Source: RMDB library OK3TST, as collected in RNAgym. An RNA of 207 nucleotides, treated with 2A3 and DMS and read out base by base. Values cover nucleotides 27 to 156. The DMS profile rests on 2,254 reads. The reactions ran in a buffer of 150 mM KOAc, 10 mM MgCl2 and 150 mM bicine (pH 8.5), at 24 C. For 2A3, 806 sequencing reads were counted.
RNA sequence: GGGAACGACUCGAGUAGAGUCGAAAAGUGGACAGCUGGUGCGUGAGAAGAAGGAUAAGAGCGGUUUCGACGCUGUUGCUGGGACCAAGGGCUUCUACUGGAUGGAAGCAGAAAUGGUCAAGAACCUUGGUAAGGAACAGGACGUCGAUAAGUCCUAUGGAAAUUGAGGAUUCGUCCUCAAUUUCCAAAAAGAAACAACAACAACAAC
Reactivity to 2A3 in 0.01 (KOAc 150mM, MgCl2 10mM, bicine 150mM(pH8.5), 24C), signal-to-noise 1, nucleotides 027 to 156: g110u090g000g000a010c010a040g020c040u080g000g000u040g050c020g080u140g040a090g000a050a000g030a060a030g010g030a000u080a040a050g050a030g030c020g000g020u000u100u010c010g000a000c010g000c020u010g010u030u030g020c010u030g000g000g060a030c010c010a010a010g000g020g000c010u000u000c010u000a060c060u040g100g000a140u070g020g010a000a000g000c030a010g030a000a130a020u110g120g060u090c030a000a040g050a050a010c000c010u010u030g000g000u040a040a050g020g000a000a000c000a000g100g140a020c000g020u050c010g000a000u030a060a000g010u000c020c000u070a110
Reactivity to DMS in 0.01 (KOAc 150mM, MgCl2 10mM, bicine 150mM(pH8.5), 24C), signal-to-noise 2, nucleotides 027 to 156: g020u000g020g010a090c070a100g020c030u000g020g000u010g000c080g050u030g020a110g010a060a100g010a160a130g000g020a140u030a070a120g000a130g010c040g030g050u000u020u020c020g020a100c030g000c000u000g070u000u000g010c020u010g010g010g030a060c010c020a000a070g000g030g000c020u000u000c020u010a200c080u000g050g030a300u000g000g040a030a020g030c050a070g000a060a040a150u020g010g010u000c100a050a130g000a050a130c010c000u000u000g000g010u000a120a120g020g020a070a100c060a050g040g020a060c000g000u000c030g000a050u000a050a130g010u000c000c000u000a190